[RMDB]
RNA sequence: GGGAACGACUCGAGUAGAGUCGAAAAGCGUACUACGCAACGCUUUGCCUUGGAUUUAUGGGUCUCUAGCGUGAAGCUCCCAAAUAGGAGCUUUCGGGCCCAUUGUCAGGCAAAGAGUUGCGUAUCGCAAACUACGAUGACUUCGGUCAUCGUAGAAUCAUCCCUUCCACUUCGGUGGAAGGGAUGAAAAAGAAACAACAACAACAAC
Reactivity to 2A3 in 0.01 (KOAc 150mM, MgCl2 10mM, bicine 150mM(pH8.5), 24C), signal-to-noise 1, nucleotides 027 to 156: g000c000g100u160a050c030u000a010c060g000c000a000a000c030g000c000u000u000u000g010c000c000u030u050g220g000a030u220u300u000a020u060g060g000g040u010c020u020c110u260a100g100c110g130u230g010a000a000g010c000u030c000c040c070a140a150a070u300a130g000g000a000g000c000u000u020u020c030g000g000g000c000c000c000a000u030u000g020u010c000a000g000g020c000a000a000a000g000a000g000u010u000g000c020g000u000a000u010c000g040c000a000a110a020c000u000a010c000g000a000u000g000a000c000u020u060c300g030g000u000c000a000u000c000g000u000a010g000a000a040